[RMDB]
RNA sequence: GGGAACGACUCGAGUAGAGUCGAAAAGAAGCUACGAAAAAUCUCAGAGAGAGAAAAAUGAGAUUAGGCGAAACUCUCUCGACGCCGAAAGAACGUGUGUACGAAGUGCACACGGAAAAGUAGCGAAGGGAUCUUACAAGUUCGCUUGUAAGAUCCCAAAAGAAACAACAACAACAAC
Reactivity to 2A3 in 0.01 (KOAc 150mM, MgCl2 10mM, bicine 150mM(pH8.5), 24C), signal-to-noise 2, nucleotides 027 to 126: g150a050a010g000c000u010a000c020g100a020a100a040a040a110u000c050u020c060a000g040a000g000a000g020a000g040a070a100a110a050a080u090g010a090g000a120u090u220a130g080g000c010g010a020a040a050c010u000c000u000c000u020c020g030a010c030g090c020c030g010a050a080a030g050a050a030c000g000u000g000u010g000u000a020c100g250a300a120g000u020g000c000a000c020a020c010g000g000a000a000a000a000g010u020a000g000c010g010a060a000
Reactivity to DMS in 0.01 (KOAc 150mM, MgCl2 10mM, bicine 150mM(pH8.5), 24C), signal-to-noise 3, nucleotides 027 to 126: g010a150a180g000c000u000a000c010g000a040a110a090a100a090u000c040u000c070a110g010a050g000a060g000a070g020a040a070a060a070a170u010g000a150g010a100u000u010a110g030g010c030g030a090a050a070c030u010c030u000c000u010c030g000a120c210g010c130c070g000a090a080a110g010a200a120c000g010u000g020u000g030u000a020c000g000a120a110g010u000g000c000a010c000a000c000g010g000a040a030a030a110g000u000a000g000c000g020a110a130
Source: RMDB library OK1LIB, as collected in RNAgym.
Structure probing data (2A3 and DMS) for a 177-nucleotide construct.
The RNA was probed in 150 mM KOAc, 10 mM MgCl2 and 150 mM bicine (pH 8.5) at 24 C.
The 2A3 profile rests on 1,376 reads.
DMS adducts were read by reverse transcription with MarathonRT.
Values cover nucleotides 27 to 126.